[RMDB]
RNA sequence: GGGAACGACUCGAGUAGAGUCGAAAAUGAAGCAAAUCCAUAAUUGCCAAUGAUGAGCAAUUCGCUAUUGCCGCCUAAAAACGGUUAGUCGGGGCUGCUAGAGCCUUGUUACCAAAGAUAGCCGGCGUUACGGCAUGAUGGUUCGCCAUCAUGCCAAUCACUCAAAAAUCUUCGGAUUUUUGAGUGAAAAAGAAACAACAACAACAAC
Reactivity to DMS in 0.01 (KOAc 150mM, MgCl2 10mM, bicine 150mM(pH8.5), 24C), signal-to-noise 1, nucleotides 027 to 156: u000g000a090a190g000c040a060a040a160u000c030c050a130u000a040a040u010u000g000c000c010a050a140u000g020a150u020g010a080g010c000a040a010u000u000c030g040c050u010a090u010u000g020c000c010g010c090c000u040a090a050a060a120a060c070g020g050u000u000a040g040u000c000g020g010g000g030c020u010g020c030u010a140g010a060g010c010c010u000u020g000u000u010a130c080c040a070a080a090g000a130u000a030g000c040c080g020g000c030g050u000u010a100c160g020g000c000a010u030g000a030u000g000g040u000u010c300g040c050c000a030u000c000a000u000g000c020c010a010a070
Reactivity to 2A3 in 0.01 (KOAc 150mM, MgCl2 10mM, bicine 150mM(pH8.5), 24C), signal-to-noise 3, nucleotides 027 to 156: u110g010a060a020g040c050a050a020a100u050c020c010a040u130a130a030u050u020g010c010c010a140a160u290g100a120u050g020a100g010c010a000a000u050u050c040g000c060u050a030u050u230g010c010c010g020c000c010u070a110a070a000a000a020c040g000g030u040u050a040g080u090c050g020g000g010g000c000u060g040c150u200a100g060a020g260c000c020u000u020g050u070u050a040c000c040a090a000a020g070a020u030a010g040c030c010g030g000c020g050u080u120a030c060g000g000c000a000u000g000a010u010g010g000u040u060c200g030c010c000a000u000c000a000u000g000c000c000a000a000